[RMDB]
RNA sequence: GGGAACGACUCGAGUAGAGUCGAAAAUUUUUAACACCAAAGCAGGUAGAGACAAUUAGUUCAAUGCUGUAUGUACACUCACUCAAACCAAGAAACCCUUGACUUUUCAGGUGGUCAGGGUGUGAAGUCACUCGAUUAAGUUCGCUUAAUCGAGUGAAAAAGAAACAACAACAACAAC
Reactivity to 2A3 in 0.01 (KOAc 150mM, MgCl2 10mM, bicine 150mM(pH8.5), 24C), signal-to-noise 1, nucleotides 027 to 126: u020u040u010u020u060a030a000c020a000c010c010a050a000a000g070c050a040g050g050u110a060g060a010g000a090c060a120a150u140u090a110g010u060u110c030a070a060u080g040c000u010g030u060a060u020g000u010a030c030a010c050u030c010a020c000u030c020a100a090a100c020c030a060a010g120a230a100a060c000c020c000u040u080g010a000c010u130u060u170u190c120a050g020g110u030g070g010u080c010a000g030g000g020u060g010u010g020a030a030g060
Reactivity to DMS in 0.01 (KOAc 150mM, MgCl2 10mM, bicine 150mM(pH8.5), 24C), signal-to-noise 3, nucleotides 027 to 126: u000u010u000u010u000a070a210c090a160c020c050a070a130a050g000c060a030g000g000u010a090g010a160g010a050c070a140a090u000u010a080g020u000u000c080a090a110u010g000c030u000g020u020a030u000g010u000a060c080a150c060u000c030a030c080u010c060a030a080a120c100c030a080a130g000a120a130a060c030c000c000u000u010g030a000c030u000u000u000u010c230a090g010g010u000g020g000u000c010a020g020g000g010u010g010u000g010a100a080g010